[RMDB]
RNA sequence: GGGAACGACUCGAGUAGAGUCGAAAAUCCGGGUCGACCUGGAUCGGCAGCCCGGUAUCGGCCGGUGUCACCACUCCUGGCUUCGGCCUCUGGAACGGUGGCUUCACGUUCGACUGGCGGCCUGGCGCAUUUCGACGCAAUUCGUUGCGUCGAAAUGAAAAGAAACAACAACAACAAC
Reactivity to DMS in 0.01 (KOAc 150mM, MgCl2 10mM, bicine 150mM(pH8.5), 24C), signal-to-noise 3, nucleotides 027 to 126: u010c000c000g000g000g030u000c020g000a130c040c010u000g010g020a090u000c050g000g000c030a130g000c260c000c000g010g010u000a080u010c170g030g030c040c020g000g000u000g000u000c010a050c020c000a220c130u010c010c010u000g010g000c020u000u010c170g020g010c010c000u000c190u010g010g000a010a090c090g000g030u010g000g000c000u000u000c150a130c140g000u000u000c010g000a060c040u010g000g000c030g000g000c010c010u000g000g010c290g010
Reactivity to 2A3 in 0.01 (KOAc 150mM, MgCl2 10mM, bicine 150mM(pH8.5), 24C), signal-to-noise 2, nucleotides 027 to 126: u050c000c000g000g020g000u060c040g020a300c020c010u070g090g030a160u000c020g030g000c040a050g080c000c000c040g030g030u160a300u200c070g220g000c010c010g000g030u030g000u000c010a010c010c000a020c080u010c000c010u010g010g020c020u030u040c130g110g000c000c020u090c150u080g010g010a030a020c050g000g020u030g020g000c000u040u080c040a080c040g040u110u070c020g040a020c050u020g010g020c000g020g000c010c010u000g040g000c100g010